[RMDB]
RNA sequence: GGGAACGACUCGAGUAGAGUCGAAAAAGAGUUCUCCAAGGUCAUCAACCCCGACCUGAGAGGGAAGGGCAGCUCCGACAUCAGGGACUCCUUCAAGGGAGCCCUGAAGACCGCCCUGGAGAAGCGGGAGCCCUACCUGAAUGAGGCCAGGCAGGCAGUCUACCUAAUGAUUCGUCAUUAGGUAGACAAAAGAAACAACAACAACAAC
Reactivity to 2A3 in 0.01 (KOAc 150mM, MgCl2 10mM, bicine 150mM(pH8.5), 24C), signal-to-noise 4, nucleotides 027 to 156: a010g060a010g010u010u020c000u000c020c000a040a060g000g000u010c020a110u050c060a170a170c020c020c040c060g020a030c000c000u040g020a070g040a040g130g010g010a070a030g020g000g010c030a040g020c010u030c060c040g110a120c030a170u020c000a010g050g120g130a300c040u000c010c000u150u270c110a100a190g050g000g000a000g020c030c000c000u010g010a000a010g010a000c020c040g000c010c000c000u010g020g050a080g000a080a030g000c000g010g020g010a030g010c000c000c000u030a060c010c020u040g060a140a140u130g010a040g050g000c020c000a020g010g020c000a000g030g040c030a000
Reactivity to DMS in 0.01 (KOAc 150mM, MgCl2 10mM, bicine 150mM(pH8.5), 24C), signal-to-noise 2, nucleotides 027 to 156: a090g070a110g020u020u000c020u000c000c050a120a090g000g030u000c030a300u020c030a050a160c110c010c020c070g000a210c000c000u010g000a120g020a210g020g000g050a300a090g000g010g050c040a150g010c040u000c010c000g020a050c080a190u010c050a120g040g040g020a160c000u010c000c000u000u040c230a160a270g030g000g000a040g010c000c010c030u000g000a000a070g000a220c060c030g000c010c010c020u020g010g000a090g020a100a080g010c000g020g020g010a070g000c040c000c020u000a080c020c010u000g000a080a120u030g010a130g010g000c090c050a070g030g020c000a010g000g030c060a130